Description: The data come from the RNA Mapping Database (RMDB), library M2PK50. An RNA of 177 nucleotides, treated with DMS and 2A3 and read out base by base. The reactions ran in a buffer of 150 mM KOAc, 10 mM MgCl2 and 150 mM bicine (pH 8.5), at 24 C. The 2A3 profile rests on 11,123 reads. For DMS the reverse transcriptase was MarathonRT. Reactivities are given for positions 27 through 126.
RNA sequence: GGGAACGACUCGAGUAGAGUCGAAAAUCGUGCCCGUUCGCGGGCACGAGUCACCUACACCGCUUCCAGUCUGGGCCACUACCUCUCUAUGAGAUCUCAGAAUAUUUGGUCAGUUCGCUGACCAAAAAGUACAGUUAUGUUUCGACAUAACUGUACUAAAAGAAACAACAACAACAAC
Reactivity to DMS in 0.01 (KOAc 150mM, MgCl2 10mM, bicine 150mM(pH8.5), 24C), signal-to-noise 8, nucleotides 027 to 126: u000c010g030u000g010c000c000c000g020u000u010c180g030c010g010g010g010c010a010c000g010a000g000u000c120a130c020c010u000a060c120a100c070c050g010c040u000u000c030c020a090g000u000c020u000g010g000g000c090c030a050c080u000a050c070c020u000c020u000c050u010a080u010g000a100g000a080u000c020u000c030a110g000a110a090u010a110u000u000u000g000g000u000c000a020g010u010u010c210g020c010u000g000a020c000c000a000a000a010a060
Reactivity to 2A3 in 0.01 (KOAc 150mM, MgCl2 10mM, bicine 150mM(pH8.5), 24C), signal-to-noise 5, nucleotides 027 to 126: u010c000g000u000g010c020c030c010g020u040u050c240g030c010g080g020g060c000a000c000g000a000g000u010c020a050c040c000u010a040c040a030c030c040g040c040u080u020c020c000a040g020u000c010u030g010g030g000c030c000a060c020u070a060c010c010u030c000u010c020u060a090u130g030a030g020a090u040c030u030c040a050g060a210a070u110a180u150u030u020g000g000u000c000a000g010u010u050c160g010c110u010g000a000c000c000a000a000a000a010